[RMDB]
RNA sequence: GGGAACGACUCGAGUAGAGUCGAAAAUAAUCAAGAUGAAUCGUUUUUAGUUUGCUUGCUUACCUUAGGGGCCAGCAUGAGAUCGACUUGAAUCUUUUUAUGUAGGCAGAUAGCGACGGAAUUUAAACGUAUCCUAGCAGUUCGCUGCUAGGAUACGAAAAGAAACAACAACAACAAC
Reactivity to DMS in 0.01 (KOAc 150mM, MgCl2 10mM, bicine 150mM(pH8.5), 24C), signal-to-noise 2, nucleotides 027 to 126: u010a070a060u040c100a040a070g010a150u020g000a030a090u020c080g020u010u020u020u020u030a110g000u020u000u000g000c000u000u000g000c010u020u000a110c050c060u000u050a120g000g000g020g000c030c040a100g000c000a060u010g000a020g000a010u000c020g010a050c120u000u000g000a110a040u020c020u000u000u000u020u000a010u020g010u020a060g010g040c060a040g000a070u000a060g060c080g000a050c010g010g000a050a120u020u000u010a030a060a230
Reactivity to 2A3 in 0.01 (KOAc 150mM, MgCl2 10mM, bicine 150mM(pH8.5), 24C), signal-to-noise 4, nucleotides 027 to 126: u170a000a030u130c080a020a020g060a070u120g090a100a060u040c060g050u030u010u040u020u020a160g050u010u040u090g010c000u010u010g000c000u050u130a180c020c000u000u140a120g020g000g040g000c000c000a010g000c000a000u050g010a040g000a040u010c010g020a030c090u020u060g040a030a030u010c000u020u070u010u010u030a150u120g090u030a030g020g010c020a050g030a190u060a050g050c010g010a010c030g010g030a060a030u110u090u130a130a050a000